[RMDB]
RNA sequence: GGGAACGACUCGAGUAGAGUCGAAAAGAUGCGGUCUUCGCAAGGACCGCAACAUGAAGGUACGAUGCUUUUGUGUCGUGCUUCUUGUUUCUGGCACGUUGUGUCUUCACGCAGACAGAAGCUACCCCGUUAUUCUGAAUUUCGAUUCAGAAUAACGAAAAGAAACAACAACAACAAC
Reactivity to DMS in 0.01 (KOAc 150mM, MgCl2 10mM, bicine 150mM(pH8.5), 24C), signal-to-noise 9, nucleotides 027 to 126: g000a120u000g010c000g000g000u000c000u000u000c290g010c260a140a110g000g000a010c000c000g010c000a010a000c030a030u000g000a050a010g010g010u010a010c010g000a010u000g000c010u010u010u010u020g030u000g010u000c000g010u000g000c000u000u000c020u000u000g010u000u000u000c010u000g000g010c070a170c100g000u000u010g020u000g010u010c160u010u010c040a030c050g010c060a090g000a110c020a020g010a030a030g010c030u000a160c010c000c020
Reactivity to 2A3 in 0.01 (KOAc 150mM, MgCl2 10mM, bicine 150mM(pH8.5), 24C), signal-to-noise 9, nucleotides 027 to 126: g050a010u030g000c000g010g000u010c020u100u130c180g060c200a050a070g020g000a000c000c000g000c000a000a000c010a010u050g050a050a010g080g010u030a010c020g010a010u040g020c010u100u220u270u300g040u010g000u010c000g000u000g000c000u020u000c010u020u050g000u000u010u000c020u010g020g020c090a030c140g150u220u260g030u060g040u080c040u120u170c070a040c040g010c020a020g020a060c010a010g020a030a000g000c010u070a090c000c000c000
The record gives the reactivity of an RNA of 177 nucleotides to DMS and 2A3.